[RMDB]
RNA sequence: GGGAACGACUCGAGUAGAGUCGAAAAACGUUGAUGUGGAUUUACUCCGAGGAGACGAACUACCACGAACAGGGGAACCUCUACCCGUGGCGUCUCCGUUUGACGAGUAAGUCCUAAGUCAACAUGCCAGGUCAACCGUUCGCGGUUGACAAAAGAAACAACAACAACAAC
Reactivity to 2A3 in 0.01 (KOAc 150mM, MgCl2 10mM, bicine 150mM(pH8.5), 24C), signal-to-noise 6, nucleotides 027 to 129: a030c080g000u000u000g000a020u040g000u070g020g000a000u010u000u000a000c000u000c000c010g000a020g000g010a000g010a000c010g000a060a060c110u210a080c080c000a000c000g020a130a020c040a160g040g010g000g020a060a120c060c030u050c020u050a060c010c030c010g000u000g000g000c000g000u000c000u000c000c000g020u080u040u110g020a010c000g000a000g000u000a000a000g000u000c000c000u000a050a020g030u000c000a000a000c010a010u100g080c010c000a050g000
Reactivity to DMS in 0.01 (KOAc 150mM, MgCl2 10mM, bicine 150mM(pH8.5), 24C), signal-to-noise 3, nucleotides 027 to 129: a110c110g000u020u000g030a040u090g000u000g040g030a050u000u000u000a000c010u050c060c040g030a110g040g010a020g000a000c000g090a160a100c110u090a290c080c000a050c060g040a020a280c290a120g090g030g010g050a070a140c000c030u040c070u040a140c130c120c000g040u020g000g020c070g000u050c030u030c000c060g030u000u000u000g060a100c300g040a020g020u060a000a040g000u060c000c010u000a030a100g010u000c000a000a000c040a110u010g050c050c010a110g000